RNA sequence: GGGAACGACUCGAGUAGAGUCGAAAACGAACAUGACAUGAAGGUCCUCUGUUCUUCGCUGCUGGGGUUAACUGCAUUGAGGUUGGACGCUCUUCCUCACACAGUGUCUGAGUCAAUCAAGAAAUACGCCUAACACCGAUUUCGAUCGGUGUUAGGCAAAAGAAACAACAACAACAAC
Reactivity to DMS in 0.01 (KOAc 150mM, MgCl2 10mM, bicine 150mM(pH8.5), 24C), signal-to-noise 1, nucleotides 027 to 126: c140g000a010a020c030a020u000g020a050c030a040u020g040a180a150g000g010u000c000c010u000c010u000g010u010u000c040u000u000c090g030c040u010g010c000u010g000g040g030g000u000u020a050a110c070u000g050c140a060u000u000g010a010g000g000u010u030g000g010a090c080g000c020u000c000u010u010c040c000u010c070a090c140a200c140a050g000u010g000u000c050u000g000a120g010u000c070a090a130u000c100a070a150g010a050a060a030u030a100c140